[RMDB]
RNA sequence: GGGAACGACUCGAGUAGAGUCGAAAAGAUAUGGAAUACUGAUCAAGCCAGGCAGCUAUGAAGUCGGAAACGAUGGAGCUGCUGGCUUUCCCAGUAUUCCUAAGUCAAAUCGUGGUUCGCCACGAAAGUUUAAUUGGUAGUUCGCUACCAAUUAAACAAAAGAAACAACAACAACAAC
Reactivity to 2A3 in 0.01 (KOAc 150mM, MgCl2 10mM, bicine 150mM(pH8.5), 24C), signal-to-noise 6, nucleotides 027 to 126: g020a010u080a050u200g000g010a010a000u010a000c000u010g020a050u090c070a020a000g000c010c010a110g270g240c000a000g020c010u120a240u300g040a030a020g000u000c010g020g010a080a060a050c000g010a010u030g010g030a010g000c000u000g000c010u000g000g000c010u000u000u000c000c000c000a000g000u010a000u010u000c000c000u010a120a010g020u020c020a050a010a200u050c010g010u000g020g000u070u070c260g000c100c010a000c000g040a080a030a000
Reactivity to DMS in 0.01 (KOAc 150mM, MgCl2 10mM, bicine 150mM(pH8.5), 24C), signal-to-noise 6, nucleotides 027 to 126: g010a040u000a300u010g010g000a010a000u000a000c000u000g010a080u010c210a030a020g010c000c010a030g030g020c000a000g030c000u000a220u010g020a130a190g000u000c010g010g010a090a110a180c000g000a010u000g010g010a020g020c000u000g010c000u000g010g000c000u000u000u010c150c100c000a010g010u000a000u000u000c000c000u010a020a080g000u000c030a070a120a150u000c000g010u000g000g000u000u020c250g020c010c000a000c000g000a030a040a080

The record gives the reactivity of an RNA of 177 nucleotides to 2A3 and DMS. Source: RMDB library TTRDEL, as collected in RNAgym. For 2A3, 14,514 sequencing reads were counted. Reactivities are given for positions 27 through 126. Conditions: 150 mM KOAc, 10 mM MgCl2 and 150 mM bicine (pH 8.5), 24 C. For DMS, 6,856 sequencing reads were counted. Reactivities are rounded to 0.1 and cut off at 0 and 3. 2A3 is a SHAPE reagent: it acylates the 2'-hydroxyl of flexible nucleotides of all four kinds.